This 177-nucleotide RNA was probed chemically with DMS and 2A3.
For DMS, 912 sequencing reads were counted.
RNA sequence: GGGAACGACUCGAGUAGAGUCGAAAACUGCCGGCCACCGCGGCCGCGAUGGCUAACACGGUAACUAGCACGGUGCAGCGCACCACCAGCACAGCUGGCCUGCCUAGCUGCAGGCGUGCGCUGGUGACGGCGUAAUAUCCUUCGGGAUAUUACGCCGAAAAGAAACAACAACAACAAC
Reactivity to DMS in 0.01 (KOAc 150mM, MgCl2 10mM, bicine 150mM(pH8.5), 24C), signal-to-noise 1, nucleotides 027 to 126: c050u000g000c040c030g020g000c010c000a060c040c010g010c050g020g000c090c160g080c040g000a030u040g000g020c030u030a060a140c180a120c060g000g010u000a040a080c050u020a150g000c030a050c060g020g000u000g000c040a070g000c040g030c030a100c140c040a020c020c000a020g000c010a050c030a030g050c080u000g050g020c010c030u000g000c010c010u000a080g030c230u000g000c000a000g010g050c030g010u000g000c000g000c000u000g010g000u000g010a180
Reactivity to 2A3 in 0.01 (KOAc 150mM, MgCl2 10mM, bicine 150mM(pH8.5), 24C), signal-to-noise 1, nucleotides 027 to 126: c020u040g040c020c000g070g030c050c010a020c010c050g030c030g080g090c100c030g000c040g050a070u050g020g000c010u040a170a000c050a010c120g040g080u050a100a010c090u060a070g110c040a030c190g070g050u090g030c040a030g050c040g020c010a050c090c040a020c030c010a000g000c030a050c000a070g130c010u220g080g080c010c000u040g030c000c060u230a110g030c250u100g030c090a030g000g000c040g000u030g020c000g000c000u000g030g020u030g060a050